[RMDB]
RNA sequence: GGGAACGACUCGAGUAGAGUCGAAAAAGAAAUAGCGAUUCUCGAAGGAGUUGAGUCCUUCGAGGAUUGCUAAGCAAAGAUGCAGAACUAUCAAUGAACGACUUUGCUCAUCUUUGUAAACAAAAAACGUGAUGUUAAGGUUCGCCUUAACAUCACGAAAAGAAACAACAACAACAAC
Reactivity to 2A3 in 0.01 (KOAc 150mM, MgCl2 10mM, bicine 150mM(pH8.5), 24C), signal-to-noise 2, nucleotides 027 to 126: a000g110a000a040a040u050a010g000c000g010a000u000u000c000u000c000g000a020a000g030g030a000g020u090u300g160a100g200u060c000c000u000u020c000g000a000g000g000a000u000u000g000c000u000a020a000g000c000a020a000a000g000a000u020g000c080a020g060a080a040c070u050a120u200c040a060a210u250g060a160a040c030g110a090c040u080u070u180g010c000u000c000a030u000c000u020u010u040g050u070a110a110a010c050a040a070a020a020a000a000
Reactivity to DMS in 0.01 (KOAc 150mM, MgCl2 10mM, bicine 150mM(pH8.5), 24C), signal-to-noise 2, nucleotides 027 to 126: a050g000a050a110a200u000a000g000c010g010a000u000u000c000u000c000g020a020a020g030g000a040g020u000u000g000a190g010u000c000c000u000u010c000g010a000g000g000a010u000u000g000c000u010a020a120g000c000a010a030a010g000a040u000g010c160a010g010a010a150c140u000a100u010c030a110a150u000g050a080a110c200g000a030c100u000u000u000g000c030u020c080a010u000c000u000u000u000g000u000a020a030a020c050a000a060a040a040a050a060